[RMDB]
RNA sequence: GGGAACGACUCGAGUAGAGUCGAAAAUUGCGCCUCCGAUUCGCCGUCGGCAUUUCCCCAGCAGCCAUGUCCUACCAGGCUGCGGUGCGGCUCGCCGCACAGGUCAUCCCUCAUCGGGCGCGUCCUGGAUAGGGCUAUACUUUCGAGUAUAGCCCAACGUUAUGGAGAAGUUCGCUUCUCCAUAACGAAAAGAAACAACAACAACAAC
Reactivity to DMS in 0.01 (KOAc 150mM, MgCl2 10mM, bicine 150mM(pH8.5), 24C), signal-to-noise 1, nucleotides 027 to 156: u000u000g010c030g000c020c010u010c100c010g020a070u010u010c020g010c000c010g040u030c060g000g000c110a160u000u000u000c040c000c060c040a130g040c010a020g060c000c020a090u030g010u000c140c060u010a160c080c110a160g000g000c040u010g010c000g000g000u010g010c090g010g060c220u010c150g000c020c010g020c070a040c030a000g030g020u000c110a160u000c010c000c000u010c080a210u010c090g000g020g010c010g030c080g040u010c040c000u010g010g000a180u010a140g020g010g020c040u000a010u000a000c000u000u010u010c300g020a060g000u010a000u000a040g010c000c000c000a000a010
Reactivity to 2A3 in 0.01 (KOAc 150mM, MgCl2 10mM, bicine 150mM(pH8.5), 24C), signal-to-noise 1, nucleotides 027 to 156: u120u100g000c030g030c000c020u130c070c000g040a110u080u140c090g010c050c000g020u020c040g000g020c000a070u100u040u040c010c000c000c000a020g030c000a000g010c010c000a180u100g050u060c020c020u080a090c070c010a010g040g000c000u000g000c010g000g020u060g000c030g050g000c040u010c100g070c010c000g060c030a020c040a060g000g070u100c070a190u170c000c000c010u160c030a100u090c040g000g010g000c030g000c000g010u000c010c020u020g040g000a120u130a180g000g000g000c000u000a000u000a000c020u070u020u200c260g070a030g010u000a000u000a000g040c080c000c000a000a000

Conditions: 150 mM KOAc, 10 mM MgCl2 and 150 mM bicine (pH 8.5), 24 C. Structure probing data (DMS and 2A3) for a 207-nucleotide construct. For DMS, 1,791 sequencing reads were counted.